Source: RMDB library OK2TST, as collected in RNAgym. Chemical mapping of a 177-nucleotide RNA with 2A3 and DMS. For DMS, 1,343 sequencing reads were counted.
RNA sequence: GGGAACGACUCGAGUAGAGUCGAAAAACUUGAAGUUCUUCUCCGUCCCCGCAGCGCCUACCAGCACCGGGAUGUGCGGCUGCACCGGCUUGGGCCAGGCCCAGCUAGGUCCGAACUUGACGAACUCAGUGUAGGAACGAUUCGUCGUUCCUACACUAAAAGAAACAACAACAACAAC
Reactivity to 2A3 in 0.01 (KOAc 150mM, MgCl2 10mM, bicine 150mM(pH8.5), 24C), signal-to-noise 1, nucleotides 027 to 126: a000c050u030u140g020a170a030g020u030u020c030u060u010c000u000c010c020g060u070c020c010c000c000g000c010a010g000c000g000c000c010u040a060c020c010a050g090c100a030c040c030g030g030g030a060u100g100u190g020c040g180g000c040u020g000c030a020c010c030g020g000c000u120u120g010g030g000c050c100a080g050g160c000c030c000a000g010c030u070a120g000g000u000c040c050g000a030a030c020u040u050g100a030c050g010a070a020c000u050c090
Reactivity to DMS in 0.01 (KOAc 150mM, MgCl2 10mM, bicine 150mM(pH8.5), 24C), signal-to-noise 2, nucleotides 027 to 126: a090c120u000u000g000a060a070g020u010u000c020u000u000c010u000c030c070g010u000c010c040c000c080g040c070a050g000c050g000c020c050u000a290c060c060a120g030c110a130c150c110g000g010g030a090u020g010u020g010c010g010g020c030u000g000c050a090c050c020g000g000c030u010u000g040g010g020c010c140a080g010g000c030c020c030a050g000c020u000a030g020g000u000c110c060g010a030a040c090u000u000g010a070c100g000a060a070c100u000c040